[RMDB]
RNA sequence: GGGAACGACUCGAGUAGAGUCGAAAAGAAGCUUGCGCUGCCGAAUGCCGAGCUCAAGCUAUUUGCCAAUGCCAGCCACAUGCCGUUUUAUGAGAACCCGCAGGACUAUUAUCCGGCGCUUCUCGGUUUCCUCGCCCGGCACAAGGCAGCCUGAUGCCGACGCGUUAGCGUUCGCGCUAACGCGUCGAAAAGAAACAACAACAACAAC
Reactivity to 2A3 in 0.01 (KOAc 150mM, MgCl2 10mM, bicine 150mM(pH8.5), 24C), signal-to-noise 1, nucleotides 027 to 156: g090a050a050g020c050u060u030g010c050g000c080u030g010c000c000g070a160a030u060g030c010c040g050a010g000c060u040c130a070a010g050c050u130a160u100u170u190g050c020c040a070a100u090g000c010c040a040g020c000c050a010c040a050u130g040c010c020g050u080u080u090u030a160u150g050a050g010a030a000c020c030c020g010c060a010g010g010a000c060u130a200u300u120a030u100c020c010g000g020c010g010c020u020u090c010u000c040g020g000u030u030u020c010c030u070c030g010c010c020c020g010g030c000a000c010a000a000g020g020c000a000g010c000c010u050g010a040u220g000c050